An RNA of 207 nucleotides, treated with 2A3 and DMS and read out base by base. For 2A3, 7,910 sequencing reads were counted. High 2A3 reactivity points to a flexible backbone, as in loops and unpaired stretches. Source: RMDB library M2RFPK, as collected in RNAgym. Values cover nucleotides 27 to 156.
RNA sequence: GGGAACGACUCGAGUAGAGUCGAAAAGCCGAUGAAUUGCCGAGAAGCCUGGCUCGAAAUCGUCGACGCAUCGACAACGGUCCUGCCAUGAGACCGUAACGAGGACAUGUCGCCUCGAAUGGCGUCGUAUAACAUGAGUGGUUCGCCACUCAUGUAACUCUUGUUUGAAGUUCGCUUCAAACAAGAGAAAAGAAACAACAACAACAAC
Reactivity to 2A3 in 0.01 (KOAc 150mM, MgCl2 10mM, bicine 150mM(pH8.5), 24C), signal-to-noise 8, nucleotides 027 to 156: g050c010c010g010a030u070g040a030a230u120u100g050c040c030g030a030g030a130a030g040c030c060u080g040g000c020u030c020g050a070a080a060u070c050g050u020c000g010a020c010g010c020a060u090c060g050a040c030a100a020c010g010g000u010c020c020u090g100c030c020a100u090g040a060g000a120c000c000g020u010a010a020c010g000a000g000g020a010c040a140u220g040u180c100g020c010c000u000c010g020a020a070u070g040g030c000g000u020c020g000u070a090u030a200a000c010a000u000g000a000g000u010g020g030u050u070c170g040c040c000a000c000u000c000a010u000g000u000a000a000
Reactivity to DMS in 0.01 (KOAc 150mM, MgCl2 10mM, bicine 150mM(pH8.5), 24C), signal-to-noise 3, nucleotides 027 to 156: g020c000c010g040a110u010g020a100a150u010u000g030c060c010g020a070g000a090a140g050c030c050u000g020g010c020u010c000g000a040a060a090u000c040g020u000c010g020a030c030g000c040a160u000c020g010a070c010a160a060c020g010g010u000c010c030u010g020c030c290a130u000g030a050g000a010c000c000g020u010a020a070c040g010a040g020g010a090c070a120u000g020u000c040g000c010c000u000c030g010a090a060u000g050g010c010g000u010c040g000u000a060u010a080a060c010a000u010g000a000g030u000g000g020u000u000c300g020c040c000a020c010u000c000a000u000g010u000a040a100